[RMDB]
Conditions: 150 mM KOAc, 10 mM MgCl2 and 150 mM bicine (pH 8.5), 24 C.
This 177-nucleotide RNA was probed chemically with DMS.
Values cover nucleotides 27 to 126.
The data come from the RNA Mapping Database (RMDB), library OK2TRN.
DMS (dimethyl sulfate) methylates the pairing face of unpaired adenines and cytosines.
For DMS the reverse transcriptase was MarathonRT.
RNA sequence: GGGAACGACUCGAGUAGAGUCGAAAACUGAAAGAUGCCAAAGCACCCCCCCCGGCUUACAUCGGAGGGUAGGAGGUGGUGUUCUUCACAACGUGCCAUGGUUCUGCAGGCUGCGGCGGAGCGAACACAUCUCUCGCUGAUUCGUCAGCGAGAGAUGAAAAGAAACAACAACAACAAC
Reactivity to DMS in 0.01 (KOAc 150mM, MgCl2 10mM, bicine 150mM(pH8.5), 24C), signal-to-noise 1, nucleotides 027 to 126: c010u000g000a060a120a060g000a070u020g000c010c040a040a150a150g040c050a200c020c000c000c010c000c000c000c000g030g030c090u000u020a090c130a070u010c020g030g030a080g020g000g020u000a040g020g020a060g010g020u000g000g010u000g020u000u010c030u000u010c030a070c120a040a080c150g030u000g000c000c000a070u000g020g000u000u000c050u020g000c030a070g000g000c030u000g010c090g000g010c120g000g000a100g040c100g030a060a040c100a170